An RNA of 207 nucleotides, treated with 2A3 and read out base by base.

[RMDB]
RNA sequence: GGGAACGACUCGAGUAGAGUCGAAAAAUGGGGAAACCUCCCUUCGUCCUUCGGCAUUGUGGUGCGUCGUGGGAAAGCGUGCCGCAUGGGGAAGCCGUGUACGAGGACGUACACCUUGUUUUGGUGGGGGAGAGUGUCACGUUCCGCUUUUGGGAGUCCUGGGGUAAUCGUUCGCGAUUACCCCAGGAAAAGAAACAACAACAACAAC
Reactivity to 2A3 in 0.01 (KOAc 150mM, MgCl2 10mM, bicine 150mM(pH8.5), 24C), signal-to-noise 2, nucleotides 027 to 156: a000u080g000g000g080g000a080a100a000c000c010u000c000c010c000u030u040c000g000u000c000c020u050u050c010g020g000c000a120u020u090g000u000g000g000u000g010c000g000u010c030g040u100g000g040g000a050a020a010g010c000g040u000g010c030c000g010c000a020u040g010g020g010g190a000a070g030c020c040g050u050g090u090a100c100g010a000g000g010a000c000g100u100a000c000a000c000c000u080u260g150u220u300u170u190g000g010u030g000g040g000g000g000a000g010a020g010u080g040u060c050a040c150g030u060u020c020c010g060c050u110u080u210u160g120g020g040a130g050u030

Description:
The reactions ran in a buffer of 150 mM KOAc, 10 mM MgCl2 and 150 mM bicine (pH 8.5), at 24 C. It was measured as part of the RMDB library VIROID. Values cover nucleotides 27 to 156.